[RMDB]
RNA sequence: GGGAACGACUCGAGUAGAGUCGAAAAGCGCCCCUUUUCGAAGGGGCGCACUGGAAAUAAAGCCGAAAGGCUAGGCAUUGCUUAUUUGGCGAAAGCCUGCCACUAUUGAGAUCUUCGGAUCUCAAAACUAGGGGGUAAAAUUCGUUUUACCCCCUAGAAAAGAAACAACAACAACAAC
Reactivity to DMS in 0.01 (KOAc 150mM, MgCl2 10mM, bicine 150mM(pH8.5), 24C), signal-to-noise 3, nucleotides 027 to 126: g010c010g020c000c000c000c000u000u000u010u010c190g030a020a010g000g020g010g030c000g010c000a000c030u000g000g010a120a080a070u000a050a080a040g000c010c010g020a110a100a120g010g020c000u000a010g020g020c010a110u000u000g030c020u000u000a140u010u010u000g000g010c000g000a080a060a090g010c000c030u000g000c020c000a100c200u010a120u010u000g000a010g000a000u000c000u000u010c220g010g000a000u010c000u000c000a000a010a040a220
Reactivity to 2A3 in 0.01 (KOAc 150mM, MgCl2 10mM, bicine 150mM(pH8.5), 24C), signal-to-noise 3, nucleotides 027 to 126: g010c000g010c020c010c010c010u000u020u020u090c160g070a000a000g000g000g000g030c000g020c000a000c000u010g040g080a030a140a110u150a080a140a040g060c040c020g070a130a070a020g010g000c040u030a010g000g000c030a090u090u100g020c020u130u140a220u300u300u300g020g010c020g020a040a030a010g000c000c010u020g010c000c000a050c040u090a170u060u080g000a000g000a000u010c010u010u070c210g050g000a000u000c000u020c000a010a020a010a010